RNA sequence: GGGAACGACUCGAGUAGAGUCGAAAAGCGCCUUCGGGCGCAGCCAAGAUAUGGAUCAUAUUCCCGCUGGAAGGACGAAGAACUGAGCUCGGAAACGAGCUCAGGGAGUCCUCCAGCGAACAUAUGAUCCUAAGUCGCCCAUAUCGUUCGCGAUAAAAACAAAUAUGGUUUUCGAACCAUAUUUGUUAAAAGAAACAACAACAACAAC
Reactivity to DMS in 0.01 (KOAc 150mM, MgCl2 10mM, bicine 150mM(pH8.5), 24C), signal-to-noise 1, nucleotides 027 to 156: g030c010g000c010c010u000u000c270g090g030g040c010g050c010a030g000c130c060a120a130g010a290u010a140u020g030g000a000u000c010a020u000a040u020u010c030c030c000g020c010u050g000g030a070a090g040g020a040c010g000a130a170g030a140a270c000u010g030a030g020c010u000c000g010g010a160a120a220c010g010a030g000c000u000c000a010g010g000g010a180g010u000c000c020u000c010c030a020g030c010g040a010a010c060a030u010a000u010g010a000u000c000c010u000a000a050g010u000c020g000c030c040c010a110u000a090u000c030g010u000u010c180g070c010g000a080u020a070a110a130
Reactivity to 2A3 in 0.01 (KOAc 150mM, MgCl2 10mM, bicine 150mM(pH8.5), 24C), signal-to-noise 3, nucleotides 027 to 156: g000c010g010c010c020u040u070c300g060g010g000c040g010c000a010g050c020c070a070a070g030a010u030a010u100g010g010a000u010c010a000u000a000u080u110c040c060c040g000c000u020g010g040a270a240g030g000a010c020g130a280a090g010a030a010c000u000g010a000g000c000u000c020g030g000a040a080a070c000g000a020g000c010u000c000a000g000g000g000a010g010u010c010c000u010c000c000a000g000c010g000a000a000c010a010u000a010u010g010a010u000c000c010u000a010a010g010u000c010g030c030c000c010a080u050a040u090c060g020u120u100c290g000c030g200a020u200a080a120a120
The record gives the reactivity of an RNA of 207 nucleotides to DMS and 2A3. Conditions: 150 mM KOAc, 10 mM MgCl2 and 150 mM bicine (pH 8.5), 24 C. 2A3 adducts were read by reverse transcription with SuperScript II with manganese. Source: RMDB library RNAMAK, as collected in RNAgym.